Structure probing data (DMS and 2A3) for a 177-nucleotide construct. DMS adducts were read by reverse transcription with MarathonRT. For 2A3 the reverse transcriptase was SuperScript II with manganese.
RNA sequence: GGGAACGACUCGAGUAGAGUCGAAAAACCAGCACCAGCCGCACGACGGUGGCGUCCACGGCGAUCGCGACCGCGCACGCCACGCCGAUCUCGGCCACUAGCGGCAUGCCGGCGAACGCGAACCCGCCUUACUCUUACAUUUCGAUGUAAGAGUAAGAAAAGAAACAACAACAACAAC
Reactivity to DMS in 0.01 (KOAc 150mM, MgCl2 10mM, bicine 150mM(pH8.5), 24C), signal-to-noise 9, nucleotides 027 to 126: a100c060c020a130g000c060a040c110c050a130g010c020c010g010c030a130c160g020a090c130g020g030u010g000g010c020g000u000c140c070a100c050g000g000c020g010a070u020c130g010c040g010a150c020c040g010c120g030c230a030c020g010c000c030a050c030g010c010c010g000a150u020c190u050c050g000g010c010c090a100c110u020a100g000c050g000g010c020a040u010g000c020c010g000g000c030g010a070a100c050g000c010g010a050a160c030c010c010g000c100
Reactivity to 2A3 in 0.01 (KOAc 150mM, MgCl2 10mM, bicine 150mM(pH8.5), 24C), signal-to-noise 9, nucleotides 027 to 126: a000c010c000a010g010c010a020c060c050a040g030c010c010g030c010a070c090g180a030c060g090g010u020g010g000c010g010u050c060c030a050c030g020g000c020g030a120u120c060g010c030g120a130c020c010g030c010g000c020a010c010g000c000c010a010c020g010c000c010g070a180u080c130u100c120g050g000c000c020a070c040u100a040g020c020g000g000c010a010u060g020c020c010g030g000c020g040a080a030c030g000c010g040a050a100c010c010c000g030c000